[RMDB]
RNA sequence: GGGAACGACUCGAGUAGAGUCGAAAAGCUAGUCGGAGACGACUAGCAACGAUCAGUUCGCUGAUCGGAACGUGCAUUCGAAUACGCUAGAAGCACGAAUAGGCGACGCAUAGCGAACUCCAGAGGAAGCUCAUGACAUGAGAGACAAGGCGUCGCGGGACUAUAUGGGAUUCGUCCCAUAUAGUCCAAAAGAAACAACAACAACAAC
Reactivity to DMS in 0.01 (KOAc 150mM, MgCl2 10mM, bicine 150mM(pH8.5), 24C), signal-to-noise 2, nucleotides 027 to 156: g020c000u000a000g000u010c030g030g000a300g000a300c000g000a050c020u000a000g080c000a080a030c030g010a000u000c000a030g030u010u000c180g050c020u000g020a020u000c010g010g000a050a030c040g010u000g000c050a230u000u000c010g000a180a230u000a100c230g000c030u000a150g010a040a050g010c030a020c040g000a150a050u000a030g010g010c020g020a080c000g030c020a150u000a130g030c040g000a030a020c020u010c040c040a110g010a300g000g030a210a190g000c010u010c030a080u000g030a150c090a300u000g020a090g020a090g000a100c020a100a170g020g000c010g060u000c020g000c010g040
Reactivity to 2A3 in 0.01 (KOAc 150mM, MgCl2 10mM, bicine 150mM(pH8.5), 24C), signal-to-noise 2, nucleotides 027 to 156: g000c000u010a000g000u010c000g020g000a030g020a160c000g000a000c000u000a010g000c010a010a020c000g000a000u000c000a020g000u030u030c030g030c060u000g000a010u010c000g000g030a110a020c010g010u000g020c030a300u000u000c000g040a070a070u250a150c090g070c100u070a050g000a030a000g000c000a000c010g000a060a110u160a080g080g000c000g000a000c000g020c020a000u060a050g020c010g050a020a010c020u020c060c060a110g060a040g180g030a090a050g050c010u030c010a080u130g060a190c040a130u120g020a030g000a000g020a100c050a070a120g010g000c000g000u000c010g000c020g000